The record gives the reactivity of an RNA of 177 nucleotides to DMS and 2A3. The DMS profile rests on 8,184 reads. The RNA was probed in 150 mM KOAc, 10 mM MgCl2 and 150 mM bicine (pH 8.5) at 24 C. It was measured as part of the RMDB library OK2TRN. For 2A3, 7,701 sequencing reads were counted. For DMS the reverse transcriptase was MarathonRT.

[RMDB]
RNA sequence: GGGAACGACUCGAGUAGAGUCGAAAAGUAGAUUGGCUUUGCCGGUUUUUUGAUCGUGGAUAAACGCAUUCUGACGCACUGUUCCGUUUUCGGUGAAGACGUCAGCCCAACGAAGCUUCAUAACGUCCAUUUCGACAUUUUUCGAAAUGUCGAAAUGAAAAGAAACAACAACAACAAC
Reactivity to DMS in 0.01 (KOAc 150mM, MgCl2 10mM, bicine 150mM(pH8.5), 24C), signal-to-noise 6, nucleotides 027 to 126: g010u010a110g010a080u000u000g030g010c020u010u000u000g010c050c030g000g010u000u000u010u010u010u010g010a040u010c040g010u010g010g010a100u010a050a070a090c090g010c110a110u010u010c080u010g000a070c040g030c050a060c080u000g010u010u010c020c010g000u000u000u000u000c030g020g020u010g010a070a020g010a130c020g000u000c010a060g000c110c010c010a090a120c100g010a070a070g010c040u000u000c060a060u010a070a080c140g010u000c080
Reactivity to 2A3 in 0.01 (KOAc 150mM, MgCl2 10mM, bicine 150mM(pH8.5), 24C), signal-to-noise 6, nucleotides 027 to 126: g080u080a020g000a180u070u250g060g000c040u040u050u120g020c050c030g050g040u070u090u020u010u120u260g080a060u090c030g040u140g050g030a050u080a100a150a020c040g010c030a050u180u060c050u130g050a040c000g020c040a050c100u050g060u150u010c010c020g000u050u030u080u160c020g010g000u040g020a050a020g020a020c000g000u010c010a010g000c010c000c000a030a020c040g060a070a010g020c000u110u110c080a120u090a200a050c020g040u030c020